[RMDB]
This 207-nucleotide RNA was probed chemically with 2A3. The RNA was probed in 150 mM KOAc, 10 mM MgCl2 and 150 mM bicine (pH 8.5) at 24 C. Values cover nucleotides 27 to 156. Reactivities are rounded to 0.1 and cut off at 0 and 3.

RNA sequence: GGGAACGACUCGAGUAGAGUCGAAAACGUAGCUGAUUACAGGGCAAAUUACUAAUACUUUCUGCAUAUCAGAUUUGCUUUCUGUAAAAAUGGACAUAAUAACACUCCUUUUUUAAUUAUGUCAAAAUAAUUAACGUGAUGUCUGAAUAUGUAAAAACUCACAUUCCCUGUUCGCAGGGAAUGUGAGAAAAGAAACAACAACAACAAC
Reactivity to 2A3 in 0.01 (KOAc 150mM, MgCl2 10mM, bicine 150mM(pH8.5), 24C), signal-to-noise 1, nucleotides 027 to 156: c010g090u110a040g070c090u070g050a120u110u040a000c000a030g050g000g000c010a000a130a130u230u070a090c030u070a050a100u120a200c040u080u160u190c080u210g000c010a070u050a080u250c000a010g000a000u020u000u040g000c000u070u140u190c030u110g000u010a050a050a000a000a090u080g030g030a000c000a010u110a030a070u070a120a000c080a040c050u190c050c000u270u050u020u000u050u210a050a000u020u020a000u000g000u000c010a000a000a230a080u200a010a010u170u080a050a000c090g030u030g080a040u070g070u010c000u030g030a070a070u010a040u040g000u040a000a000a000a170a210